RNA sequence: GGGAACGACUCGAGUAGAGUCGAAAAGAUAUGGAACCGGAUGGACAUGAAUCCUCGGAAACGAGAUUCAACAGCCAUUCGGUUCCUAAGUCAAAGAGGUCGUGUUGGUUCGCCAACACGACCUCAAGACUUUAAUCAUGUUCGCAUGAUUAAAGUCAAAAGAAACAACAACAACAAC
Reactivity to DMS in 0.01 (KOAc 150mM, MgCl2 10mM, bicine 150mM(pH8.5), 24C), signal-to-noise 3, nucleotides 027 to 126: g010a020u000a190u010g000g010a010a010c000c000g010g000a000u000g010g000a180c080a150u000g000a010a000u000c160c050u000c000g010g000a040a020a110c000g000a040g000a030u000u000c000a010a080c300a130g010c010c000a010u000u010c000g000g010u000u000c000c000u000a000a040g000u000c010a110a130a140g000a010g020g010u000c000g000u010g000u000u010g010g000u010u000c230g010c040c020a020a000c000a010c000g000a000c000c010u000c020a010a050